[RMDB]
RNA sequence: GGGAACGACUCGAGUAGAGUCGAAAAGAUAUGGACAGGCGAAGAACUAGGCAUCGAUGAGUCGGAAACGACGAGAUGCCCUAGGGAGCCUGUCCUAAGUCAAAACUUUGACCUUCGGGUCAAAGAAGAGUAGGUAUUGGUUCGCCAAUACCUACUCAAAAGAAACAACAACAACAAC
Reactivity to 2A3 in 0.01 (KOAc 150mM, MgCl2 10mM, bicine 150mM(pH8.5), 24C), signal-to-noise 3, nucleotides 027 to 126: g010a010u040a040u120g000g000a010c010a000g020g030c010g190a300a000g010a140a030c010u000a000g000g000c020a010u000c000g240a300u210g100a050g040u020c000g020g000a080a080a000c010g000a000c010g010a020g000a090u000g020c080c000c000u000a000g030g000g000a020g010c000c000u000g000u000c000c020u010a010a000g000u000c020a000a000a040a060c000u010u000u020g000a000c010c000u010u020c300g150g000g000u000c000a020a000a010g030a060a020
Reactivity to DMS in 0.01 (KOAc 150mM, MgCl2 10mM, bicine 150mM(pH8.5), 24C), signal-to-noise 3, nucleotides 027 to 126: g000a050u000a300u010g000g010a010c010a000g000g010c000g000a100a150g000a170a160c010u010a000g000g010c010a000u000c010g000a120u020g020a200g000u010c000g000g000a060a060a150c000g010a020c000g000a160g010a030u000g000c110c030c000u010a000g020g000g000a110g010c000c000u000g000u000c000c000u000a000a050g000u000c030a050a070a090a120c000u000u000u000g010a010c000c000u000u000c230g000g000g000u010c000a000a000a010g010a090a090